[RMDB]
RNA sequence: GGGAACGACUCGAGUAGAGUCGAAAAACUAUUUGUUCUAUAGCAAACAAACCCGAAACACAGCAUAUAUUUGUUAUAUAUGCUUUGUGGUACACAGCUGUUAGGACUUGAGCCAUCAGGGUCCAAACGGGACCCAUGGAUUCGUCCAUGGGUCCCGAAAAGAAACAACAACAACAAC
Reactivity to 2A3 in 0.01 (KOAc 150mM, MgCl2 10mM, bicine 150mM(pH8.5), 24C), signal-to-noise 1, nucleotides 027 to 126: a020c100u130a090u040u040u100g040u020u000c100u050a100u140a120g000c070a000a080a040c030a000a040a070c020c000c000g060a000a030a000c000a000c020a000g000c000a000u000a000u010a070u030u070u050g200u260u060a000u060a000u030a000u000g020c000u000u050u000g000u020g050g000u020a030c150a030c020a060g080c030u060g060u070u080a070g000g040a000c000u040u030g030a030g000c000c010a090u060c050a030g010g000g080u000c000c000a050a100a000
Reactivity to DMS in 0.01 (KOAc 150mM, MgCl2 10mM, bicine 150mM(pH8.5), 24C), signal-to-noise 1, nucleotides 027 to 126: a000c180u010a180u000u000u000g010u010u000c080u000a020u040a160g000c030a100a010a050c190a070a060a150c080c000c050g020a120a230a000c070a060c040a020g000c000a030u000a000u000a000u000u000u000g000u000u020a000u000a010u000a040u000g010c000u000u000u030g010u000g000g000u010a010c120a160c260a130g000c000u000g030u000u000a120g010g000a040c000u000u000g000a070g000c030c150a090u000c030a020g000g000g010u020c000c030a000a030a150